[RMDB]
RNA sequence: GGGAACGACUCGAGUAGAGUCGAAAACGCUGUACACCGGGAAUGCAUCGAACUCGCGUUUAAGCGGUCUGUAAGGCCGUCGGCGUCCUGGGGAAGGGUCACGGAAGUGACCCUUCUUUUUUAUUGUACCGAUGCAAUAAUUCGUUAUUGCAUCGGUAAAAGAAACAACAACAACAAC
Reactivity to DMS in 0.01 (KOAc 150mM, MgCl2 10mM, bicine 150mM(pH8.5), 24C), signal-to-noise 2, nucleotides 027 to 126: c040g010c050u020g020u020a080c130a060c020c020g000g020g040a120a060u010g010c110a110u040c100g000a030a110c040u020c100g020c170g000u000u000u000a060a100g000c010g000g000u000c010u000g050u000a040a050g000g000c000c010g010u000c000g000g000c010g000u000c000c000u020g000g000g000g000a030a000g010g000g010u000c000a010c030g000g130a130a110g030u010g000a000c010c000c000u010u000c000u000u000u000u030u030u000a100u010u010g010u010
Reactivity to 2A3 in 0.01 (KOAc 150mM, MgCl2 10mM, bicine 150mM(pH8.5), 24C), signal-to-noise 1, nucleotides 027 to 126: c040g000c040u130g070u100a090c050a010c040c010g000g000g060a100a080u110g110c040a100u100c070g000a040a040c000u010c080g000c040g000u000u020u000a050a010g000c000g000g000u030c000u070g300u250a060a250g000g000c030c000g010u050c000g000g000c000g000u040c000c000u020g000g000g000g000a000a000g000g060g000u000c010a000c010g020g250a280a040g000u000g000a000c000c000c000u000u000c000u000u000u000u000u000u000a060u050u060g040u000